An RNA of 207 nucleotides, treated with 2A3 and read out base by base. The RNA was probed in 150 mM KOAc, 10 mM MgCl2 and 150 mM bicine (pH 8.5) at 24 C. Values cover nucleotides 27 to 156. Source: RMDB library M2RFPK, as collected in RNAgym.

[RMDB]
RNA sequence: GGGAACGACUCGAGUAGAGUCGAAAAAUACUUCUCAGGAUGGCGCGUUGCAGUCCAACAAGAUCCAGGGACUGUACAGAAUUUUCCUAUACCUUGAGUCGGGUUUGGAAUCUAAGGUUGACUCGCUAAAACUUUACGUGGUUCGCCACGUAAAGAACUUCCACAAGUGGUUCGCCACUUGUGGAAGAAAAGAAACAACAACAACAAC
Reactivity to 2A3 in 0.01 (KOAc 150mM, MgCl2 10mM, bicine 150mM(pH8.5), 24C), signal-to-noise 2, nucleotides 027 to 156: a010u140a050c040u040u000c030u010c050a010g160g020a100u120g030g130c050g000c090g070u030u040g010c000a000g000u000c030c000a030a020c070a190a140g150a040u130c040c030a070g000g000g000a000c000u010g030u030a020c010a040g240a180a070u030u000u020u020c010c010u060a040u060a070c000c010u010u020g010a000g020u020c000g000g000g000u000u000u040g000g020a010a000u000c040u110a150a070g150g030u130u230g100a000c000u020c010g000c020u050a090a000a070a120c010u000u000u000a000c000g000u030g030g000u010u020c090g020c060c010a000c000g000u000a000a000a000g000a000a060